[RMDB]
RNA sequence: GGGAACGACUCGAGUAGAGUCGAAAAGUAACGGGCAAUCAGGGUUCGAUUCCGGAGAGGGAGCCUGAGAAACGGCUACCACAUCUAAGGAAGCCAGCAGGCUCGGGGAGAUAGUGACGAAAAAUAAAAAAGUUUCUGUAUUCGUACAGAAACUUUUAAAAGAAACAACAACAACAAC
Reactivity to 2A3 in 0.01 (KOAc 150mM, MgCl2 10mM, bicine 150mM(pH8.5), 24C), signal-to-noise 2, nucleotides 027 to 126: g020u050a050a070c050g020g010g020c080a100a100u080c020a080g080g010g010u100u030c020g030a090u100u060c010c000g020g050a070g000a030g050g070g000a000g000c000c020u020g000a020g090a050a180a010c060g000g050c020u100a160c000c000a050c020a070u110c130u100a100a050g000g000a000a030g000c000c000a000g000c000a000g000g000c000u000c000g020g000g000g000a060g010a050u150a100g040u030g020a010c010g060a040a020a030a000a080u210a010a150
Reactivity to DMS in 0.01 (KOAc 150mM, MgCl2 10mM, bicine 150mM(pH8.5), 24C), signal-to-noise 4, nucleotides 027 to 126: g010u010a070a140c100g000g020g030c070a070a130u030c080a070g000g010g030u010u020c070g020a200u010u020c060c050g010g020a110g010a120g000g020g000a030g010c000c030u000g000a080g000a050a040a100c190g000g000c010u000a070c010c000a120c180a100u060c140u020a170a100g000g000a180a010g010c000c000a060g000c020a030g000g000c000u000c060g000g000g000g000a130g010a090u010a070g010u020g000a100c120g000a020a060a100a060a100u040a030a100

Structure probing data (2A3 and DMS) for a 177-nucleotide construct. The reactions ran in a buffer of 150 mM KOAc, 10 mM MgCl2 and 150 mM bicine (pH 8.5), at 24 C.